Structure probing data (2A3) for a 207-nucleotide construct. Source: RMDB library OK3TST, as collected in RNAgym. The 2A3 profile rests on 692 reads. For 2A3 the reverse transcriptase was SuperScript II with manganese.
[RMDB]
RNA sequence: GGGAACGACUCGAGUAGAGUCGAAAAGAUUACAGGUAUGUAAUGCCUAGUAUGAGUCUGCUAGGGGACUCAUACACAAGUACGAGUACUGGUAGUUGUAGGUUGACCUACAGCUAGCAGUACAUGUACUAGGUUAUACCUAGUACUAAUCAGUACACACAUGCUUGGACUUCGGUCCAAGCAUGUGAAAAGAAACAACAACAACAAC
Reactivity to 2A3 in 0.01 (KOAc 150mM, MgCl2 10mM, bicine 150mM(pH8.5), 24C), signal-to-noise 2, nucleotides 027 to 156: g020a000u060u020a040c040a050g020g140u250a110u100g010u040a050a000u010g000c020c030u100a020g000u000a000u000g000a000g030u010c030u060g080c120u240a110g000g000g020g050a000c000u000c000a000u030a000c040a000c050a080a000g000u000a000c030g060a000g010u000a000c020u020g090g170u030a010g000u000u000g000u000a020g020g180u040u300g300a300c020c000u000a000c000a000g000c000u000a000g140c010a000g000u000a000c000a000u010g000u000a000c000u000a000g040g020u000u110a050u080a130c000c000u000a010g020u000a000c000u020a000a120u100c050a000g030u060a020c020a000